Structure probing data (2A3 and DMS) for a 177-nucleotide construct. For 2A3, 1,058 sequencing reads were counted. Reactivities are rounded to 0.1 and cut off at 0 and 3. The reactions ran in a buffer of 150 mM KOAc, 10 mM MgCl2 and 150 mM bicine (pH 8.5), at 24 C.
[RMDB]
RNA sequence: GGGAACGACUCGAGUAGAGUCGAAAAGAAGAUAAUUCACGUUUUCCGUAUGAAGACCGGCUGCAAUUAGUGCUUGAGGGCAUCCAAGAUAUUACCAAUCUUACGGUACAUCCCGGCUCCGAAUAUAUAUAUGCGAGUAUUUCGAUACUCGCAUAUAAAAAGAAACAACAACAACAAC
Reactivity to 2A3 in 0.01 (KOAc 150mM, MgCl2 10mM, bicine 150mM(pH8.5), 24C), signal-to-noise 1, nucleotides 027 to 126: g050a010a000g060a070u130a100a180u170u050c020a050c090g000u000u020u020u040c020c000g000u060a090u150g040a030a040g010a040c000c050g030g030c060u020g000c030a040a070u020u060a110g050u030g080c000u020u040g090a090g040g010g010c020a020u000c040c000a040a020g040a040u050a050u100u110a020c020c020a010a060u070c010u040u060a020c090g030g020u000a060c000a060u060c000c000c000g020g000c010u010c000c010g050a120a000u050a000u030a020
Reactivity to DMS in 0.01 (KOAc 150mM, MgCl2 10mM, bicine 150mM(pH8.5), 24C), signal-to-noise 3, nucleotides 027 to 126: g000a070a070g020a170u000a090a110u000u010c040a090c110g000u010u000u000u000c010c060g000u010a070u010g010a130a080g000a070c050c040g000g020c160u000g000c060a050a060u000u010a070g030u000g010c030u000u000g020a120g010g010g000c130a050u010c030c060a020a050g010a060u000a040u010u000a090c150c090a030a070u000c060u000u000a080c110g000g020u000a060c090a080u010c060c010c020g010g010c080u000c010c020g000a080a040u000a060u010a080
Reactivities are given for positions 27 through 126.